[RMDB]
RNA sequence: GGGAACGACUCGAGUAGAGUCGAAAAUCUAUUCCAUGUCCAAAUCUGGAAGCCCAGCGGCGCCCAGCACGAACCUUGCGGUGGUCACCCACUCGCACGGGUAGCCUGCGACUUGCUGCGCGUGGCCACAACACCGGACUUUCGAGUCCGGUGUUGUAAAAGAAACAACAACAACAAC
Reactivity to DMS in 0.01 (KOAc 150mM, MgCl2 10mM, bicine 150mM(pH8.5), 24C), signal-to-noise 2, nucleotides 027 to 126: u000c050u020a200u000u000c020c020a140u070g010u020c130c020a050a180a030u000c080u010g000g000a040a130g000c040c020c080a090g000c030g030g000c030g040c070c000c060a030g000c030a020c090g000a160a180c030c010u000u000g030c000g000g020u000g000g000u020c130a160c300c000c010a010c110u040c010g030c000a020c170g020g030g020u030a060g000c110c050u020g000c000g070a120c040u000u000g010c010u000g000c300g000c000g000u020g010g010c000c000
Reactivity to 2A3 in 0.01 (KOAc 150mM, MgCl2 10mM, bicine 150mM(pH8.5), 24C), signal-to-noise 3, nucleotides 027 to 126: u020c010u050a190u070u000c020c000a030u110g100u110c050c070a080a020a160u140c050u030g000g060a090a040g000c000c000c000a010g060c020g050g010c000g000c000c010c010a000g000c000a000c030g080a080a110c000c000u020u020g000c010g000g020u000g030g050u210c020a070c030c010c010a000c000u250c010g000c000a020c030g010g000g010u000a060g010c010c000u020g040c010g050a110c010u040u090g010c010u030g000c010g010c010g020u000g120g010c000c000